[RMDB]
RNA sequence: GGGAACGACUCGAGUAGAGUCGAAAACUCUUUCUGGUCGGCCAGCUCGGAGCGCAGCUUGGCCAACCGCUCCGCCGACGCCUCGUCUUCUUCUUUGGACAGCGCCAUCUCUUCGAUCUCCAGCCGGCCCCUCCCAUCCGUUCGCGGAUGGGAGGGGAAAAGAAACAACAACAACAAC
Reactivity to 2A3 in 0.01 (KOAc 150mM, MgCl2 10mM, bicine 150mM(pH8.5), 24C), signal-to-noise 1, nucleotides 027 to 126: c000u000c000u030u110u000c050u030g030g060u030c030g000g000c000c000a020g020c060u060c090g150g100a130g000c130g000c090a000g040c030u180u190g070g010c000c000a000a000c000c000g000c000u010c000c000g000c070c030g000a050c000g040c000c000u040c060g040u000c000u030u000c060u050u070c040u110u060u110g000g000a020c020a030g020c020g020c060c000a080u000c020u030c040u060u060c070g060a040u000c000u020c030c000a000g050c000c000g000g020
Description:
Conditions: 150 mM KOAc, 10 mM MgCl2 and 150 mM bicine (pH 8.5), 24 C. The record gives the reactivity of an RNA of 177 nucleotides to 2A3. It was measured as part of the RMDB library OK1LIB. The 2A3 profile rests on 654 reads.